An RNA of 207 nucleotides, treated with 2A3 and DMS and read out base by base. The 2A3 profile rests on 4,763 reads. The DMS profile rests on 2,857 reads.

[RMDB]
RNA sequence: GGGAACGACUCGAGUAGAGUCGAAAAGUAGGCAUACCGUAAUCCUGCCAGCUUAAAUUAAACGCAAACAACAAAAAUUACGCUCCAGCUUACGCAAAAGUAGCGUAGGUUUAUCUCUGUUUUGGAGCCGAUCUUUUUGCCAUAUCUACUAACAAAACCAUAAUAACGCGUUCGCGCGUUAUUAUGGAAAAGAAACAACAACAACAAC
Reactivity to 2A3 in 0.01 (KOAc 150mM, MgCl2 10mM, bicine 150mM(pH8.5), 24C), signal-to-noise 6, nucleotides 027 to 156: g070u090a050g010g000c020a050u080a150c060c080g060u070a020a070u080c040c030u020g020c010c010a040g020c040u070u090a040a130a140u130u150a090a130a050c060g010c070a050a090a090c070a070a000c030a020a090a020a030a030u110u060a030c030g000c010u000c000c000a000g000c010u000u000a000c010g000c020a100a110a070a090g110u140a100g030c000g000u000a000g020g000u000u070u080a120u020c120u010c060u160g110u130u100u090u050g000g000a000g000c000c020g030a040u030c030u000u040u020u030u030g030c010c010a040u030a050u130c060u060a080c040u060a130a080c040a050a070a020a050
Reactivity to DMS in 0.01 (KOAc 150mM, MgCl2 10mM, bicine 150mM(pH8.5), 24C), signal-to-noise 2, nucleotides 027 to 156: g030u000a040g000g010c090a110u010a200c030c110g010u000a080a110u010c030c050u000g020c010c020a200g030c070u000u000a040a110a130u000u020a090a080a080c110g000c050a010a100a100c030a120a070c040a010a030a030a010a060u000u000a080c060g040c020u000c000c000a220g040c010u010u010a010c000g010c020a070a080a180a200g030u010a090g050c010g010u010a010g010g020u000u000u020a050u020c040u000c130u010g010u010u000u000u000g040g010a040g030c000c010g000a130u010c030u000u000u000u000u000g030c000c040a170u000a120u020c020u000a040c070u000a090a120c050a060a070a120a210